[RMDB]
RNA sequence: GGGAACGACUCGAGUAGAGUCGAAAACACAGUUCAGAGGCCUCAGCUGAACCUGAAGUUAUCCUAAGCUCGAGCCCCAGAGUGAGGACUCGGGGUCAGGCAUCCGAUUCCCCAUCAGCUCCUUUACUAAAGCUGUGCAGAGAAUCCGAGGCUAUGAAUAGUGCGUACUAUUCGUAGUACGCACUAUAAAAGAAACAACAACAACAAC
Reactivity to DMS in 0.01 (KOAc 150mM, MgCl2 10mM, bicine 150mM(pH8.5), 24C), signal-to-noise 2, nucleotides 027 to 156: c090a140c100a120g000u020u000c040a070g000a190g020g050c000c010u000c020a120g030c030u000g000a050a060c020c020u000g000a150a070g000u010u000a070u000c020c060u000a070a180g020c000u000c000g030a100g080c000c000c030c010a180g020a190g020u000g030a100g030g020a040c020u000c000g040g040g040g010u000c000a040g010g010c050a100u000c050c030g010a130u000u000c000c000c010c020a090u000c020a040g020c020u020c050c060u000u000u000a170c120u010a050a120a070g020c010u000g020u000g000c080a110g000a050g010a070a050u000c050c050g010a090g010g010c030u000a130u040g000a120
Reactivity to 2A3 in 0.01 (KOAc 150mM, MgCl2 10mM, bicine 150mM(pH8.5), 24C), signal-to-noise 2, nucleotides 027 to 156: c030a010c010a020g040u050u020c020a020g050a060g100g090c000c000u020c010a010g000c010u020g020a010a020c020c040u090g070a150a020g030u060u080a070u030c020c000u040a100a020g010c000u020c040g100a070g030c000c000c000c020a020g010a010g040u080g070a070g030g100a030c000u030c040g010g010g000g030u020c020a000g030g000c030a100u070c110c010g010a010u010u010c010c010c030c010a050u050c010a020g000c010u090c030c070u300u300u210a260c130u230a090a150a020g000c010u010g010u030g010c040a010g040a010g020a090a010u020c030c080g010a000g000g000c010u030a040u050g070a040

Description:
The record gives the reactivity of an RNA of 207 nucleotides to DMS and 2A3. Values cover nucleotides 27 to 156. Reactivities are rounded to 0.1 and cut off at 0 and 3. The reactions ran in a buffer of 150 mM KOAc, 10 mM MgCl2 and 150 mM bicine (pH 8.5), at 24 C.